[RMDB]
RNA sequence: GGGAACGACUCGAGUAGAGUCGAAAAAGGUAUUACGCAGAAAUUGUUCCAGUAACUGUUGCUCAAUUUCAAACGUAGACAUCUCUUUGUCGGCUUUCAGCUUCAAUCGCUUUGAAACAUCGAGCAAAUACUAAUAGCCAUUCGUGGCUAUUAGUAUAAAAGAAACAACAACAACAAC
Reactivity to DMS in 0.01 (KOAc 150mM, MgCl2 10mM, bicine 150mM(pH8.5), 24C), signal-to-noise 8, nucleotides 027 to 126: a060g000g010u000a040u000u010a060c100g010c080a150g010a100a080a080u010u010g010u000u000c020c010a140g000u010a070a130c130u000g010u000u010g010c000u000c010a060a070u000u000u000c010a010a040a120c040g010u000a040g010a030c030a010u000c300u010c160u010u000u000g020u000c000g000g010c020u000u010u010c190a050g010c010u000u010c110a100a090u000c070g010c200u000u010u000g000a020a020a030c130a140u000c130g000a020g010c030a030a070
Reactivity to 2A3 in 0.01 (KOAc 150mM, MgCl2 10mM, bicine 150mM(pH8.5), 24C), signal-to-noise 5, nucleotides 027 to 126: a000g090g010u100a050u110u090a040c050g000c030a020g050a050a100a050u090u070g020u040u010c030c020a000g020u050a130a100c050u070g090u150u070g000c000u000c010a010a030u010u010u010c000a040a050a020c020g000u010a020g040a030c010a020u080c140u040c000u210u090u050g050u020c000g010g030c010u150u270u250c170a030g010c000u060u040c020a040a090u100c040g080c120u020u010u030g030a020a020a010c050a090u060c030g000a000g040c020a010a070
The record gives the reactivity of an RNA of 177 nucleotides to DMS and 2A3. For 2A3, 5,181 sequencing reads were counted. The reactions ran in a buffer of 150 mM KOAc, 10 mM MgCl2 and 150 mM bicine (pH 8.5), at 24 C. 2A3 adducts were read by reverse transcription with SuperScript II with manganese. Values cover nucleotides 27 to 126. It was measured as part of the RMDB library OK2TST.